Chemical mapping of a 177-nucleotide RNA with DMS and 2A3. For DMS, 66,681 sequencing reads were counted.

RNA sequence: GGGAACGACUCGAGUAGAGUCGAAAAGACACACUCAGGUUCUUGAGAUAGAACCCAACUCAGCUAUCUCAAGUUCUAGUUGCCGAGUUGGACUUCGAAAGGUCUCCUCGGAAGUGUGUGGAGACAAGAUAGUAUUCACGUUCGCGUGAGUGCUAUCAAAAGAAACAACAACAACAAC
Reactivity to DMS in 0.01 (KOAc 150mM, MgCl2 10mM, bicine 150mM(pH8.5), 24C), signal-to-noise 9, nucleotides 027 to 126: g000a040c010a000c010a000c010u010c060a090g000g000u000u000c000u000u000g000a020g000a010u000a000g000a060a090c130c090c080a050a070c130u030c140a150g000c000u000a010u000c000u000c010a000a010g010u000u000c010u010a020g080u030u010g010c010c010g000a010g000u010u040g010g000a020c010u010u010c180g020a090a140a090g000g000u000c000u010c300c000u000c000g000g000a040a020g010u000g020u000g000u000g000g010a080g000a070c140a090a110
Reactivity to 2A3 in 0.01 (KOAc 150mM, MgCl2 10mM, bicine 150mM(pH8.5), 24C), signal-to-noise 9, nucleotides 027 to 126: g020a000c000a000c000a000c010u050c040a040g040g020u010u000c000u000u000g000a000g000a000u010a000g030a060a050c000c050c010a060a070c040u080c080a040g040c010u000a000u000c000u000c010a000a000g000u000u000c010u020a030g050u070u090g030c000c000g000a000g010u070u140g050g010a000c000u060u020c130g150a120a030a010g020g000u000c010u010c010c000u000c000g010g010a030a030g010u000g000u000g000u020g040g050a070g010a020c050a050a030
Background
The reactions ran in a buffer of 150 mM KOAc, 10 mM MgCl2 and 150 mM bicine (pH 8.5), at 24 C.